Annotation
The data come from the RNA Mapping Database (RMDB), library 15KLIB. Chemical mapping of a 170-nucleotide RNA with 2A3 and DMS.

[RMDB]
RNA sequence: GGGAACGACUCGAGUAGAGUCGAAAAAUAGGCUUAUCAAGAGAGGUGGAGGGAGUGGCCCGAUGAAACCCGGCAGCCAGAAAUGGUGCCAAUUCCUGCAGCGGAAACGUUGAAUGAUGAGCCGAUGACGCUCGACACUUCGGUGUCGAGAAAAGAAACAACAACAACAAC
Reactivity to 2A3 in 0.01 (KOAc 150mM, MgCl2 10mM, bicine 150mM(pH8.5), 24C), signal-to-noise 3, nucleotides 027 to 129: a000u130a040g030g000c000u020u020a040u010c020a060a000g030a000g000a030g060g060u060g000g030a050g000g010g000a040g000u130g150g210c000c000c000g040a090u040g010a010a020a010c000c000c000g000g000c010a030g170c000c000a000g050a000a040a010u050g020g000u000g010c030c000a000a020u060u040c000c000u030g030c010a000g000c010g040g030a000a020a030c030g020u020u070g020a070a080u050g000a000u010g000a000g000c010c010g040a030u090g020a000c060g020
Reactivity to DMS in 0.01 (KOAc 150mM, MgCl2 10mM, bicine 150mM(pH8.5), 24C), signal-to-noise 3, nucleotides 027 to 129: a120u060a090g010g040c020u020u050a050u020c000a030a120g000a150g000a080g020g010u050g010g000a040g030g030g020a240g000u010g020g060c000c000c000g000a080u030g000a050a080a120c130c030c010g000g080c000a060g050c030c020a010g020a060a100a180u020g000g000u030g040c000c020a020a090u090u030c060c020u080g020c040a060g000c070g010g060a030a020a020c050g040u030u080g100a090a140u060g000a040u030g020a060g030c070c000g020a000u040g020a080c210g010

Reactivities are given for positions 27 through 129. Conditions: 150 mM KOAc, 10 mM MgCl2 and 150 mM bicine (pH 8.5), 24 C. For 2A3, 6,719 sequencing reads were counted. For DMS, 10,075 sequencing reads were counted.